[RMDB]
This 207-nucleotide RNA was probed chemically with 2A3. It was measured as part of the RMDB library OK3TST. 2A3 adducts were read by reverse transcription with SuperScript II with manganese. Reactivities are given for positions 27 through 156.
RNA sequence: GGGAACGACUCGAGUAGAGUCGAAAAUACCGUCAAGCCGCUAAACGGCGGAAGCGACUUUAACGUGCAUUAUACCCGCAUGCACUACAUCGACGGCGAGCGUGUAACCAACAAGGUGCGGAAACUCAACAAUGGCGCUGGCGGCACGGUGCUGAACAGAUCACCUUCCUUUCGAGGAAGGUGAUCUAAAAGAAACAACAACAACAAC
Reactivity to 2A3 in 0.01 (KOAc 150mM, MgCl2 10mM, bicine 150mM(pH8.5), 24C), signal-to-noise 1, nucleotides 027 to 156: u070a000c030c030g000u020c020a020a010g030c000c020g000c030u020a100a080a080c170g040g000c040g000g000a000a020g000c050g140a080c060u070u120u000a110a040c060g000u020g010c020a000u000u090a090u180a300c000c010c000g030c000a000u000g000c000a000c110u060a010c000a080u210c150g060a040c040g040g000c040g000a000g080c000g000u030g160u100a070a070c030c030a020a220c000a120a000g080g000u110g070c000g000g130a000a120a120c240u200c040a000a000c010a050a270u070g000g000c000g030c000u010g000g030c030g070g000c000a000c040g000g100u060g050c100u090g030a000a060c110